[RMDB]
RNA sequence: GGGAACGACUCGAGUAGAGUCGAAAAAGGACCAAACACAUGCUGAACCCCGGAAAAGUGGCGGAGCAACUACACAGAGAAGGGCACAGGCACAAUGUGUAUAAUAAGACAAUAAGUUCAGUGAUGAGGUAUUGUUCUGUUUCGACAGAACAAUACCAAAAGAAACAACAACAACAAC
Reactivity to 2A3 in 0.01 (KOAc 150mM, MgCl2 10mM, bicine 150mM(pH8.5), 24C), signal-to-noise 1, nucleotides 027 to 126: a000g110g000a060c000c000a010a040a010c080a000c000a010u070g000c000u000g000a050a010c000c040c000c040g020g110a000a080a080a060g060u060g010g140c080g070g050a060g070c020a000a120c020u180a000c070a000c000a060g150a010g050a190a090g000g000g070c020a030c050a070g020g130c080a010c060a000a220u020g000u000g010u040a000u000a120a000u030a000a020g070a000c050a040a090u100a240a090g070u120u110c060a010g040u000g120a080u060g110a040
Reactivity to DMS in 0.01 (KOAc 150mM, MgCl2 10mM, bicine 150mM(pH8.5), 24C), signal-to-noise 2, nucleotides 027 to 126: a020g000g010a140c030c050a100a140a190c090a060c030a150u010g000c030u010g000a080a190c090c030c040c030g010g010a110a070a050a090g030u010g010g040c090g030g000a060g040c100a010a100c080u010a060c040a040c060a080g040a040g030a250a060g020g000g000c040a120c050a090g010g000c030a030c140a090a110u010g010u000g000u000a040u000a070a010u020a110a100g000a090c170a090a070u010a040a080g030u020u000c020a040g030u010g000a090u000g000a190
Source: RMDB library OK2TRN, as collected in RNAgym.
Chemical mapping of a 177-nucleotide RNA with 2A3 and DMS.
Values cover nucleotides 27 to 126.
The 2A3 profile rests on 730 reads.
For DMS, 786 sequencing reads were counted.